[RMDB]
An RNA of 177 nucleotides, treated with DMS and 2A3 and read out base by base. It was measured as part of the RMDB library M2PK50. The RNA was probed in 150 mM KOAc, 10 mM MgCl2 and 150 mM bicine (pH 8.5) at 24 C. Reactivities are given for positions 27 through 126. The DMS profile rests on 874 reads.

RNA sequence: GGGAACGACUCGAGUAGAGUCGAAAAUCGGAAAAGUUCGCUUUUCCGAAAAGAAAGCGCCAAAAGGUGGCGGGCAAAAGCCCGCGCGGCACCGGCGCCGGCAAAGCUAAUGCUUCGGCAUUAGCAACAGUGUGUAAGGGUUCGCCCUUACACACUGAAAAGAAACAACAACAACAAC
Reactivity to DMS in 0.01 (KOAc 150mM, MgCl2 10mM, bicine 150mM(pH8.5), 24C), signal-to-noise 1, nucleotides 027 to 126: u010c000g010g040a000a040a000a010g030u000u010c180g000c020u000u000u010u000c000c000g000a000a050a070a090g010a070a180a210g020c020g010c010c010a070a060a100a230g000g030u000g010g000c050g010g040g000c010a100a050a080a200g010c000c000c020g060c000g000c070g040g050c040a030c040c040g010g010c010g040c020c020g030g000c080a100a080a150g000c010u010a000a010u000g010c000u000u000c210g050g000c010a000u000u000a000g030c010a030a020
Reactivity to 2A3 in 0.01 (KOAc 150mM, MgCl2 10mM, bicine 150mM(pH8.5), 24C), signal-to-noise 1, nucleotides 027 to 126: u040c010g000g000a020a020a020a010g050u070u110c100g040c150u000u010u030u060c000c000g010a000a020a000a000g030a000a040a000g020c000g000c000c000a070a160a040a040g070g020u030g070g000c060g000g020g000c110a300a300a290a050g000c000c000c000g010c000g000c050g120g000c030a010c000c040g000g040c030g000c020c020g100g000c120a190a010a020g020c000u010a020a010u020g000c020u030u070c230g100g030c010a010u000u000a010g000c020a000a020